[RMDB]
RNA sequence: GGGAACGACUCGAGUAGAGUCGAAAAGAAGUGGCAGGGACAUGCCCCAUAAGCUCGUUCUAGCAACAUAUGUUUGGCUAGUUCGAGCGAUUAGUCUUGAGGAGCGUCCUCUCGCCUCUUUACGAGAGCCUAUCACGCGGUUCGCCGCGUGAUAGGCAAAAGAAACAACAACAACAAC
Reactivity to 2A3 in 0.01 (KOAc 150mM, MgCl2 10mM, bicine 150mM(pH8.5), 24C), signal-to-noise 1, nucleotides 027 to 126: g180a060a010g010u000g000g000c090a030g000g000g000a000c000a000u240g070c020c000c000c000a000u000a050a000g000c000u000c000g030u000u000c000u000a000g020c000a040a000c090a150u110a100u300g220u120u230u180g130g010c000u000a000g000u000u000c050g000a000g010c000g000a000u010u030a080g020u040c000u030u160g000a200g000g000a080g010c000g000u000c070c000u220c020u000c150g000c040c000u040c000u000u000u200a010c060g000a000g000a000